[RMDB]
RNA sequence: GGGAACGACUCGAGUAGAGUCGAAAAGAUAUGGAGAUGAGUUCUCUACCGACGAAGACUUUCGGAAACGAAAGUCAGAGGUAGAAUACUCUAAUCUCCUAAGUCGAAAGCUAUGUUCGCAUAGCAAGUUCAUGUCGAAGUUCGCUUCGACAUGAACAAAAGAAACAACAACAACAAC
Reactivity to DMS in 0.01 (KOAc 150mM, MgCl2 10mM, bicine 150mM(pH8.5), 24C), signal-to-noise 2, nucleotides 027 to 126: g000a030u000a300u000g010g020a010g010a000u000g010a040g000u000u000c130u000c000u000a000c000c000g000a170c300g000a110a060g000a010c000u000u000u000c010g000g010a060a090a220c000g000a000a020a000g030u000c000a000g000a070g000g000u000a010g000a020a030u000a040c000u000c000u010a130a080u000c000u000c000c000u000a020a020g000u000c050g010a060a160a110g010c010u010a010u000g000u000u010c260g010c000a000u000a000g050c010a050a130
Reactivity to 2A3 in 0.01 (KOAc 150mM, MgCl2 10mM, bicine 150mM(pH8.5), 24C), signal-to-noise 1, nucleotides 027 to 126: g010a030u100a010u140g000g000a000g010a020u030g000a020g000u080u000c030u040c020u100a000c040c020g300a300c030g040a130a030g010a010c000u020u000u000c040g000g060a070a040a060c010g000a040a010a000g000u000c000a000g010a010g000g020u000a010g020a010a010u060a040c000u020c000u000a050a200u040c010u000c000c000u040a100a010g000u010c020g070a110a020a000g020c000u000a000u020g030u040u230c280g000c180a010u000a000g000c000a030a040
Description
Structure probing data (DMS and 2A3) for a 177-nucleotide construct. The RNA was probed in 150 mM KOAc, 10 mM MgCl2 and 150 mM bicine (pH 8.5) at 24 C. Source: RMDB library TTRDEL, as collected in RNAgym. 2A3 is a SHAPE reagent: it acylates the 2'-hydroxyl of flexible nucleotides of all four kinds. DMS adducts were read by reverse transcription with MarathonRT. 2A3 adducts were read by reverse transcription with SuperScript II with manganese.